[RMDB]
RNA sequence: GGGAACGACUCGAGUAGAGUCGAAAACGAGGAUCCCCGCGCAGGGAGGCAGCCACCAGGAGAAAGCGGAGAAGUCACCUCCAGAGAAACCCUCUCCAACGAACAAAGAAGACCGCUGGGGCGCCAGAAGGCCUGACGUUCGCGUCAGGCAAAAGAAACAACAACAACAAC
Reactivity to DMS in 0.01 (KOAc 150mM, MgCl2 10mM, bicine 150mM(pH8.5), 24C), signal-to-noise 4, nucleotides 027 to 129: c080g020a060g010g000a080u010c060c000c060c020g060c140g060c030a070g000g040g040a050g040g040c060a110g030c130c040a140c100c090a120g020g010a000g000a000a000a000g020c200g030g010a080g010a130a120g000u050c110a100c000c000u020c030c040a120g010a070g010a140a130a190c080c020c050u000c020u010c020c060a100a040c140g060a060a020c080a130a080a080g050a050a120g000a120c110c060g040c140u060g000g010g110g020c050g030c070c030a000g010a080a030g050
Reactivity to 2A3 in 0.01 (KOAc 150mM, MgCl2 10mM, bicine 150mM(pH8.5), 24C), signal-to-noise 3, nucleotides 027 to 129: c050g000a030g020g030a020u080c020c000c010c000g000c000g000c020a040g020g020g000a010g030g000c030a010g060c020c010a080c000c000a000g010g020a040g050a020a050a000g040c060g000g000a010g010a040a030g020u020c000a110c150c000u000c010c040a020g030a020g040a040a090a040c010c000c010u000c000u050c000c030a080a010c030g050a020a020c030a170a090a100g060a040a000g030a050c010c000g000c010u000g060g000g010g000c020g010c030c000a050g010a060a000g050
An RNA of 170 nucleotides, treated with DMS and 2A3 and read out base by base. Source: RMDB library 15KLIB, as collected in RNAgym. Values are in units of 0.01, from 0 to 300, in steps of 10. Conditions: 150 mM KOAc, 10 mM MgCl2 and 150 mM bicine (pH 8.5), 24 C.